[RMDB]
RNA sequence: GGGAACGACUCGAGUAGAGUCGAAAAGAUAUGGAGACUUCCAUGGAGCAGUUCGGAAACGAAUACUGCUAUGAAGUGGAAGUCUCCUAAGUCAAAAGCUCAAAUCGUCUUCGGACGAUUUGAGCAAUCCAUACCUAUCCUUCGGGAUAGGUAUGGAAAAAGAAACAACAACAACAAC
Reactivity to DMS in 0.01 (KOAc 150mM, MgCl2 10mM, bicine 150mM(pH8.5), 24C), signal-to-noise 2, nucleotides 027 to 126: g010a040u000a300u000g000g000a010g010a030c000u020u000c000c000a000u000g000g000a020g020c000a000g010u000u000c010g020g000a090a070a120c000g000a010a100u000a040c020u000g000c000u000a130u010g000a130a230g000u010g000g000a020a010g010u000c000u000c000c000u000a000a060g010u000c030a090a070a150a120g020c000u000c000a000a000a010u000c000g000u000c000u000u020c230g020g000a010c010g000a000u000u000u000g030a020g010c000a010a010
Reactivity to 2A3 in 0.01 (KOAc 150mM, MgCl2 10mM, bicine 150mM(pH8.5), 24C), signal-to-noise 2, nucleotides 027 to 126: g010a030u060a010u090g000g000a000g000a010c000u010u000c020c000a010u070g000g050a010g000c010a010g020u020u020c030g010g060a050a020a010c010g000a040a040u140a300c030u000g000c000u090a300u190g130a230a020g000u000g020g000a010a020g010u020c000u000c000c010u000a000a000g000u020c000a000a000a070a120g000c020u010c000a000a000a020u020c010g050u000c010u070u180c300g080g020a000c000g000a010u000u000u000g000a000g000c010a000a010

An RNA of 177 nucleotides, treated with DMS and 2A3 and read out base by base. Values cover nucleotides 27 to 126. For 2A3, 2,812 sequencing reads were counted.